Source information:
This 177-nucleotide RNA was probed chemically with DMS and 2A3. The DMS profile rests on 2,787 reads. Reactivities are given for positions 27 through 126. The RNA was probed in 150 mM KOAc, 10 mM MgCl2 and 150 mM bicine (pH 8.5) at 24 C. 2A3 adducts were read by reverse transcription with SuperScript II with manganese. The 2A3 profile rests on 2,798 reads.

[RMDB]
RNA sequence: GGGAACGACUCGAGUAGAGUCGAAAAAAAGGAAUUAACGUUUUUUGGUAAAAUGUGCUAAUGUAAAGAGUGAGAAGAUUAGUGAUACAUAAUGAAAGCAAUGCAUUCUUUCACAUGGAAAUGGGAACGUCAGUAAUGAGUUCGCUCAUUACUGACGAAAAGAAACAACAACAACAAC
Reactivity to DMS in 0.01 (KOAc 150mM, MgCl2 10mM, bicine 150mM(pH8.5), 24C), signal-to-noise 3, nucleotides 027 to 126: a050a060a050g000g000a060a070u000u010a080a080c090g010u000u000u010u000u010u000g010g020u010a050a040a070a050u000g020u000g010c060u010a070a020u000g010u000a030a060a080g000a080g020u000g000a090g010a080a070g010a040u000u000a060g020u010g010a110u000a070c130a050u000a050a080u000g000a050a060a080g000c130a050a080u010g010c080a050u000u000c020u000u010u010c080a030c040a030u000g010g000a050a070a030u010g010g020g020a050a130
Reactivity to 2A3 in 0.01 (KOAc 150mM, MgCl2 10mM, bicine 150mM(pH8.5), 24C), signal-to-noise 3, nucleotides 027 to 126: a000a000a000g090g010a070a060u090u020a060a010c030g020u000u030u000u000u080u140g130g010u080a080a050a060a060u060g010u030g030c020u050a060a030u070g050u080a060a040a020g050a020g020u050g050a080g020a100a060g060a070u020u060a030g040u010g030a050u080a160c030a020u130a080a030u130g050a060a020a000g040c010a010a020u100g020c020a030u030u000c000u030u050u020c020a030c010a020u030g010g100a040a110a090u060g000g030g030a060a010